[RMDB]
RNA sequence: GGGAACGACUCGAGUAGAGUCGAAAACGACGAGGUCAGCUUGCCGCACUCCAAGCUCAAGGCCAACAUCGCGCAGAUUCUCAAGAACGAGGGGUACAUCAGCGACUUCCGAACCGAGGACGCUCGGGUAAAUGGAGUCAUUCGUGACUCCAUUUACAAAAGAAACAACAACAACAAC
Reactivity to 2A3 in 0.01 (KOAc 150mM, MgCl2 10mM, bicine 150mM(pH8.5), 24C), signal-to-noise 6, nucleotides 027 to 126: c030g060a010c030g030a010g010g040u030c030a020g010c010u020u060g050c040c040g020c040a040c030u030c020c010a030a010g000c000u050c080a100a100g030g010c010c000a010a020c010a080u040c020g000c010g010c050a010g010a130u120u010c020u020c030a030a090g090a090a030c070g010a060g010g010g000g020u040a030c020a110u090c040a040g030c020g070a030c020u090u020c020c030g030a040a050c010c000g010a010g030g030a080c080g050c100u010c020g060g010
Reactivity to DMS in 0.01 (KOAc 150mM, MgCl2 10mM, bicine 150mM(pH8.5), 24C), signal-to-noise 6, nucleotides 027 to 126: c050g010a070c080g000a280g010g000u000c050a050g000c040u000u000g020c070c080g010c030a070c070u000c060c030a070a050g000c030u000c170a080a110g000g000c030c040a060a100c250a120u000c040g010c070g020c100a080g000a140u000u000c020u010c040a070a130g000a080a060c100g000a090g010g000g000g020u010a040c050a070u000c060a060g020c050g020a050c040u000u010c030c020g010a100a220c030c020g000a030g010g000a150c210g000c010u000c020g010g010

This 177-nucleotide RNA was probed chemically with 2A3 and DMS.
The RNA was probed in 150 mM KOAc, 10 mM MgCl2 and 150 mM bicine (pH 8.5) at 24 C.
It was measured as part of the RMDB library OK2TST.
The DMS profile rests on 6,530 reads.